[RMDB]
RNA sequence: GGGAACGACUCGAGUAGAGUCGAAAAUAGCUGAUCCUACAUGUGAUCGCGCUGACUAUGCUAGGUACGCCAUGGUACAGAUAUGAUCGAUCCUACUAGUCCAUGACGAUCCUGAUCACGGUACCGACAGAACUUUAGUCUUCGGACUAAAGUUCUGAAAAGAAACAACAACAACAAC
Reactivity to DMS in 0.01 (KOAc 150mM, MgCl2 10mM, bicine 150mM(pH8.5), 24C), signal-to-noise 3, nucleotides 027 to 126: u000a100g000c080u000g000a040u000c020c130u020a120c140a090u010g020u010g010a020u000c020g020c080g000c070u000g010a040c030u000a020u020g000c100u000a020g000g010u010a170c090g020c230c030a040u010g000g010u010a090c270a100g010a120u020a060u000g000a060u010c010g010a300u000c010c020u010a030c040u000a060g000u000c060c110a050u000g000a120c020g000a060u000c020c060u000g010a020u000c020a060c060g050g000u010a090c050c010g000a280
Reactivity to 2A3 in 0.01 (KOAc 150mM, MgCl2 10mM, bicine 150mM(pH8.5), 24C), signal-to-noise 2, nucleotides 027 to 126: u160a010g040c080u030g020a030u030c020c030u100a090c060a160u250g080u180g000a010u010c020g000c020g010c080u020g010a050c000u020a020u230g020c060u020a010g000g030u070a030c010g010c030c020a030u070g050g070u230a170c050a080g160a110u180a050u160g060a070u090c060g030a070u040c000c010u000a060c010u020a020g040u030c040c030a080u100g030a070c030g000a020u030c000c010u020g030a020u040c010a000c060g000g020u030a020c000c020g020a030
An RNA of 177 nucleotides, treated with DMS and 2A3 and read out base by base. Reactivities are rounded to 0.1 and cut off at 0 and 3. The DMS profile rests on 2,580 reads. It was measured as part of the RMDB library OK2TRN. Values cover nucleotides 27 to 126. Conditions: 150 mM KOAc, 10 mM MgCl2 and 150 mM bicine (pH 8.5), 24 C.